The data come from the RNA Mapping Database (RMDB), library OK3TST. This 207-nucleotide RNA was probed chemically with 2A3. Conditions: 150 mM KOAc, 10 mM MgCl2 and 150 mM bicine (pH 8.5), 24 C. For 2A3 the reverse transcriptase was SuperScript II with manganese.
RNA sequence: GGGAACGACUCGAGUAGAGUCGAAAAACUUGAUGAAAUGAUUCUGUGUAAAGUCAAAAACCAAAAAGUCAGCACUGAAUGACAUUUCACACAUGGGUAACUGCAUGAGUGGUGUUGAGGUAGAAGAUGGGAAAGGAGAGCAACUUUAGGGUGGGAACUGGUCAUACGCUUUCGAGCGUAUGACCAGAAAAGAAACAACAACAACAAC
Reactivity to 2A3 in 0.01 (KOAc 150mM, MgCl2 10mM, bicine 150mM(pH8.5), 24C), signal-to-noise 1, nucleotides 027 to 156: a000c070u100u060g020a110u010g000a080a000a000u050g000a000u060u000c040u050g010u000g000u050a030a080a010g050u030c170a120a090a050a090a300c070c080a030a120a060a070a000g050u010c000a020g000c010a000c080u010g000a050a020u080g050a050c050a020u000u000u000c010a020c000a010c010a110u170g000g030g090u130a110a120c080u060g070c060a050u040g030a000g050u080g000g040u000g080u100u040g020a060g000g000u010a020g020a140a000g000a000u090g000g000g030a080a110a020g000g020a080g000a040g000c030a020a060c000u040u110u090a050g040g020g020u110g040g050g010a010a010